[RMDB]
Background: An RNA of 177 nucleotides, treated with 2A3 and DMS and read out base by base. For 2A3, 1,185 sequencing reads were counted.
RNA sequence: GGGAACGACUCGAGUAGAGUCGAAAACGGGCCACCUCGACCUGAAUGGAAGCCGGCGGCACCUCGCUAACGGCCAAGAAUUGGAGCCAAUCAAUUCUUGCGGAGAACUGUGAAUGCGCAAACCAACCGUGAACAUGAACUUCGGUUCAUGUUCACGAAAAGAAACAACAACAACAAC
Reactivity to 2A3 in 0.01 (KOAc 150mM, MgCl2 10mM, bicine 150mM(pH8.5), 24C), signal-to-noise 1, nucleotides 027 to 126: c020g030g070g060c000c020a020c010c030u000c030g100a120c010c000u080g140a110a060u140g030g010a030a000g000c030c020g060g040c000g000g020c030a090c020c050u030c010g000c000u040a110a010c020g040g000c010c000a000a010g000a010a000u020u020g030g000a050g140c040c010a020a100u160c010a020a000u040u000c000u000u010g000c060g030g070a120g050a100a080c040u060g000u040g090a060a120u130g030c000g030c080a020a090a050c000c030a000a050c020
Reactivity to DMS in 0.01 (KOAc 150mM, MgCl2 10mM, bicine 150mM(pH8.5), 24C), signal-to-noise 1, nucleotides 027 to 126: c040g010g000g020c010c040a070c090c010u010c040g020a200c040c010u000g000a130a100u000g000g040a120a160g010c060c040g050g020c260g010g000c070a040c110c050u010c030g010c050u020a100a300c080g000g000c050c030a020a020g010a040a020u000u010g000g010a090g020c110c180a060a180u000c020a040a010u000u010c010u000u000g020c120g000g000a030g000a060a130c040u010g000u000g000a110a060u000g020c100g010c050a040a050a070c060c050a060a040c250